[RMDB]
RNA sequence: GGGAACGACUCGAGUAGAGUCGAAAAGGCAGGACUUACCAAGUCUGGGGGCCGAUGAGGGUUGGCUCAAAGUAGGGUUUUUACUUGAAAACUCAAGCUGUGACCCCAAAACGAUGGAGGUAAAUGAAAAAUCCAUCUGCCUUCGGGCAGAUGGAAACGAGUGAAAAUAGUUCGCUAUUUUCACUCGAAAAGAAACAACAACAACAAC
Reactivity to 2A3 in 0.01 (KOAc 150mM, MgCl2 10mM, bicine 150mM(pH8.5), 24C), signal-to-noise 2, nucleotides 027 to 156: g040g000c030a010g050g010a020c020u050u050a110c060c090a090a020g030u030c050u080g010g000g000g030g040c070c090g020a050u090g040a070g000g020g030u070u090g040g000c020u050c110a090a090a020g060u070a060g000g020g000u040u050u020u050u060a090c040u070u120g020a060a030a050a040c050u030c030a030a000g010c060u070g060u120g080a030c000c010c010c010a010a120a030a010c060g000a010u050g040g020a030g010g030u060a040a100a120u190g050a080a030a010a020a040u020c000c000a000u000c000u000g000c000c000u030u030c140g010g000g000c000a010g000a000u000g000g000a000a000a000
Reactivity to DMS in 0.01 (KOAc 150mM, MgCl2 10mM, bicine 150mM(pH8.5), 24C), signal-to-noise 2, nucleotides 027 to 156: g030g040c030a120g020g000a090c000u000u000a120c080c050a070a160g010u000c030u000g010g010g040g050g020c050c040g010a110u010g010a190g000g020g010u000u000g010g000c060u000c050a030a060a090g020u000a120g010g000g000u000u000u000u000u020a060c070u000u010g000a050a040a060a070c100u000c000a040a080g010c010u020g040u000g020a130c000c000c010c030a040a050a080a080c050g030a120u000g020g020a070g050g020u010a050a090a090u000g010a010a030a100a080a150u010c000c000a000u000c000u000g000c000c000u000u010c300g080g020g020c000a010g000a010u010g020g000a010a010a000